The record gives the reactivity of an RNA of 177 nucleotides to DMS and 2A3. Values are in units of 0.01, from 0 to 300, in steps of 10. For DMS, 1,598 sequencing reads were counted. It was measured as part of the RMDB library TTRDEL.
[RMDB]
RNA sequence: GGGAACGACUCGAGUAGAGUCGAAAAGAUAUGGAGGUUGGUCGCUUGGAUUUAACCAUAUAUCGGAAACGAUAUAUCCCUUUGUCAGCGGCAACCUCCUAAGUCAAAACUCAGGUUCGCCUGAGAAUCGAGUACGUUAGUUCGCUAACGUACUCGAAAAAGAAACAACAACAACAAC
Reactivity to DMS in 0.01 (KOAc 150mM, MgCl2 10mM, bicine 150mM(pH8.5), 24C), signal-to-noise 2, nucleotides 027 to 126: g000a030u000a300u010g000g010a000g010g010u010u010g010g010u010c000g010c000u010u020g010g000a080u000u000u010a010a070c160c120a020u000a000u000a030u010c000g010g000a110a050a230c000g000a010u000a000u000a000u000c040c040c090u010u000u010g010u000c050a050g000c000g010g000c000a020a010c010c000u000c010c000u000a000a030g000u010c040a070a050a130a150c000u000c000a020g000g000u000u000c210g020c010c000u000g000a010g000a130a110
Reactivity to 2A3 in 0.01 (KOAc 150mM, MgCl2 10mM, bicine 150mM(pH8.5), 24C), signal-to-noise 2, nucleotides 027 to 126: g010a020u060a040u120g010g000a000g020g020u020u150g150g150u130c030g040c050u130u250g130g010a170u250u160u250a080a030c000c020a020u000a000u000a000u050c000g000g000a000a040a040c010g000a000u020a000u000a000u100c030c010c000u030u100u190g170u100c060a000g000c000g000g000c000a000a000c000c000u000c000c010u000a010a000g010u000c010a000a030a080a080c030u030c000a000g040g020u060u070c250g060c040c000u010g010a000g010a020a130